[RMDB]
RNA sequence: GGGAACGACUCGAGUAGAGUCGAAAAAUAGUGACCUAAAAGGUGUAGAAUAGGUGGGAGGGGCAACCCGACGGUGAAAUACCACCCCUUUUGGCGUUACUUUGCUAACUUGGAAUAACAGUACCUUUGAAAGCAACAUAUUCGUAUGUUGCUUUCAAAAAGAAACAACAACAACAAC
Reactivity to DMS in 0.01 (KOAc 150mM, MgCl2 10mM, bicine 150mM(pH8.5), 24C), signal-to-noise 2, nucleotides 027 to 126: a090u020a020g000u000g010a040c000c000u000a020a010a020a000g000g010u030g000u000a000g000a110a040u000a010g040g020u000g000g000g020a020g040g000g000g020c300a100a090c000c000c000g010a150c300g000g020u000g000a010a000a020u000a130c000c000a030c010c010c000c000u010u000u000u000g000g020c230g000u000u000a000c030u010u000u010g040c100u020a100a060c070u030u010g000g010a220a090u010a120a030c150a070g010u000a080c090c020u000u030
Reactivity to 2A3 in 0.01 (KOAc 150mM, MgCl2 10mM, bicine 150mM(pH8.5), 24C), signal-to-noise 3, nucleotides 027 to 126: a010u200a010g010u010g020a010c000c000u010a000a000a000a000g050g020u150g020u150a030g050a150a020u020a010g010g020u010g000g000g020a130g010g000g000g000c000a020a050c000c000c000g000a000c020g000g010u020g010a000a010a000u030a000c000c000a000c010c000c000c000u000u020u010u010g050g000c100g000u000u000a000c000u050u030u060g050c020u040a060a140c020u030u060g020g070a130a060u130a150a020c010a010g020u080a080c000c030u000u000

This 177-nucleotide RNA was probed chemically with DMS and 2A3. The RNA was probed in 150 mM KOAc, 10 mM MgCl2 and 150 mM bicine (pH 8.5) at 24 C. For 2A3 the reverse transcriptase was SuperScript II with manganese. Values cover nucleotides 27 to 126. Source: RMDB libraries RFM100 and RFMREP, as collected in RNAgym.